Structure probing data (2A3 and DMS) for a 177-nucleotide construct. It was measured as part of the RMDB library OK2TST. The reactions ran in a buffer of 150 mM KOAc, 10 mM MgCl2 and 150 mM bicine (pH 8.5), at 24 C. The DMS profile rests on 18,586 reads.
RNA sequence: GGGAACGACUCGAGUAGAGUCGAAAAGAUCUUUACAUUGCUCAAUCGAGGGAUUCGAUCGGCUCACGCGAAGAUUGUAGCUGAUCAGAGAAGACGCUUCAGAAGUCUUACUGAUGAAGCAAGCUCACAUCCCUAAUAUCUUCGGAUAUUAGGGAUGAAAAGAAACAACAACAACAAC
Reactivity to 2A3 in 0.01 (KOAc 150mM, MgCl2 10mM, bicine 150mM(pH8.5), 24C), signal-to-noise 9, nucleotides 027 to 126: g020a040u020c020u030u070u040a070c030a100u070u160g050c020u040c130a090a130u070c080g020a040g040g110g040a070u120u070c030g010a020u020c020g010g000c000u010c010a040c060g070c050g070a090a080g070a130u060u190g050u090a010g000c010u010g020a010u010c020a020g040a000g000a070a010g030a020c040g010c040u070u050c090a100g030a190a010g030u000c010u040u020a050c010u010g030a030u020g010a010a000g010c030a030a020g020c000u010c010a060
Reactivity to DMS in 0.01 (KOAc 150mM, MgCl2 10mM, bicine 150mM(pH8.5), 24C), signal-to-noise 9, nucleotides 027 to 126: g010a050u000c010u000u000u000a090c110a110u010u000g010c050u010c090a080a070u000c070g010a060g010g010g000a130u000u000c050g000a080u000c060g010g000c010u000c170a050c110g000c090g010a050a070g010a100u000u010g010u000a060g010c010u000g010a040u000c010a070g010a160g010a040a040g010a060c070g010c100u000u000c110a060g010a200a080g000u000c130u010u000a050c010u000g000a190u000g000a060a040g020c000a080a090g000c030u000c050a220